[RMDB]
RNA sequence: GGGAACGACUCGAGUAGAGUCGAAAAUCCACAUUCGUGUGGAGUACUGGGGUCAGCGAUGAGACCGAAGUUCUGAUGACCUAUGCUGAAGCCUCCACGGCAUAGCAAGGAACCGGUCGAGCUGACGGAGGCACCCAAUUGAGCUGUUCGCAGCUAACGAUGUAAUGGUUUUCGAACCAUUACAUCGAAAAGAAACAACAACAACAAC
Reactivity to 2A3 in 0.01 (KOAc 150mM, MgCl2 10mM, bicine 150mM(pH8.5), 24C), signal-to-noise 8, nucleotides 027 to 156: u000c010c000a010c010a020u100u150c250g130u060g000u010g020g020a030g030u110a140c120u140g040g000g060g070u080c020a010g010c010g240a300u080g010a040g000a010c000c000g080a300a060g000u000u000c010u010g150a300u030g000a020c010c000u000a000u010g000c000u020g030a180a040g000c000c000u010c000c010a010c000g000g000c000a000u000a000g020c030a100a300g000g000a000a000c020c000g010g000u000c000g000a010g000c000u000g030a050c020g000g010a000g000g000c010a040c000c010c010a030a090u110u230g080a020g000c010u020g050u160u130c280g010c140a000g000c010u040a080a050
Reactivity to DMS in 0.01 (KOAc 150mM, MgCl2 10mM, bicine 150mM(pH8.5), 24C), signal-to-noise 2, nucleotides 027 to 156: u000c000c010a030c000a080u000u000c150g050u000g010u000g010g000a060g010u000a040c070u000g000g030g020g020u010c040a080g020c000g000a170u010g020a200g010a020c000c010g020a110a100g040u010u010c000u000g020a160u000g000a120c300c000u000a040u000g000c010u000g010a050a100g050c010c010u000c010c020a130c030g020g000c010a030u000a020g020c020a040a040g040g000a030a040c090c010g000g000u000c020g010a070g000c020u000g000a050c040g010g070a090g010g010c000a270c010c000c000a040a160u010u000g000a180g000c010u000g000u000u000c100g010c090a060g040c010u010a060a290